[RMDB]
RNA sequence: GGGAACGACUCGAGUAGAGUCGAAAAGCCACUUACGGACAGUCCGUCUGACGUACAGUCUCACUCGCAUGACUAGUCAAAGUCAUGACUGUGAGCGAGUACGACUGAUGGUCAGUUCGACUGUGGAUGCGAUAGUGAGCUUCGGCUCACUAUCGCAAAAAGAAACAACAACAACAAC
Reactivity to DMS in 0.01 (KOAc 150mM, MgCl2 10mM, bicine 150mM(pH8.5), 24C), signal-to-noise 1, nucleotides 027 to 126: g010c010c000a000c020u000u000a160c060g000g000a000c000a040g000u000c000c020g050u000c020u000g000a070c030g000u000a030c000a190g020u010c010u000c030a010c000u000c220g000c000a000u010g000a030c000u000a110g030u020c300a090a070a040g000u000c030a000u000g000a060c080u000g020u000g000a020g020c030g000a210g000u000a010c010g000a060c000u000g000a000u010g000g020u000c000a030g020u000u000c010g020a230c160u000g000u000g000g010a100
Reactivity to 2A3 in 0.01 (KOAc 150mM, MgCl2 10mM, bicine 150mM(pH8.5), 24C), signal-to-noise 1, nucleotides 027 to 126: g030c010c000a010c030u070u120a070c020g020g000a010c000a020g020u000c000c030g000u000c000u000g020a030c000g030u010a000c000a000g060u060c010u020c010a000c000u040c060g010c030a030u010g000a000c020u030a030g150u190c050a250a100a000g030u000c010a050u020g060a100c010u010g000u010g000a000g030c020g040a010g000u000a000c010g010a010c000u010g020a020u020g000g000u000c000a000g010u000u030c000g020a010c050u020g000u010g030g010a080
An RNA of 177 nucleotides, treated with DMS and 2A3 and read out base by base. Source: RMDB library OK2TRN, as collected in RNAgym. Conditions: 150 mM KOAc, 10 mM MgCl2 and 150 mM bicine (pH 8.5), 24 C. 2A3 adducts were read by reverse transcription with SuperScript II with manganese. DMS adducts were read by reverse transcription with MarathonRT.